[RMDB]
RNA sequence: GGGAACGACUCGAGUAGAGUCGAAAAUACUUAGUACGCGCGUAGUUGCAGGCAUUCCGGGUGCAGCAACUGACGUGGAAGACUUUUCCCAGAGUGUGCGCUUCAACUGGCGUGCUGAGUAGUGCACGAAUUGCACGUACGUUCGCGUACGUGCAAAUCAUCAAACUCAUUUCGAUGAGUUUGAUGAAAAAGAAACAACAACAACAAC
Reactivity to DMS in 0.01 (KOAc 150mM, MgCl2 10mM, bicine 150mM(pH8.5), 24C), signal-to-noise 4, nucleotides 027 to 156: u000a050c040u000u010a050g020u000a070c040g010c030g040c040g020u000a040g020u000u000g000c020a160g010g010c000a040u000u000c010c300g000g040g130u000g000c020a300g030c000a020a020c010u000g010a020c030g010u000g010g010a120a120g000a150c160u010u010u000u000c010c010c000a170g000a150g020u000g020u000g010c020g020c000u000u000c060a090a110c080u010g020g010c050g030u000g020c000u000g010a050g010u000a060g000u000g000c000a080c050g020a080a160u000u000g010c010a020c010g030u000a000c000g000u000u020c300g040c000g050u000a000c000g010u000g000c000a010a010a050
Reactivity to 2A3 in 0.01 (KOAc 150mM, MgCl2 10mM, bicine 150mM(pH8.5), 24C), signal-to-noise 8, nucleotides 027 to 156: u100a010c000u010u000a010g010u010a010c010g000c000g000c010g040u020a010g020u000u000g010c040a120g110g000c010a020u100u090c110c190g200g050g020u010g000c020a010g000c010a010a010c010u080g190a040c010g010u010g010g030a020a010g230a160c040u170u100u040u020c000c000c000a000g010a010g020u130g000u010g010c020g010c020u040u080c090a300a300c090u020g010g000c000g000u000g010c000u000g000a000g000u040a010g010u010g010c010a000c010g020a050a100u050u020g000c000a000c000g000u000a000c000g010u020u040c200g010c000g080u000a000c000g000u000g000c000a000a000a000
The data come from the RNA Mapping Database (RMDB), library M2RFOK. This 207-nucleotide RNA was probed chemically with DMS and 2A3. Values cover nucleotides 27 to 156. For DMS the reverse transcriptase was MarathonRT. For DMS, 13,240 sequencing reads were counted. Conditions: 150 mM KOAc, 10 mM MgCl2 and 150 mM bicine (pH 8.5), 24 C. 2A3 adducts were read by reverse transcription with SuperScript II with manganese.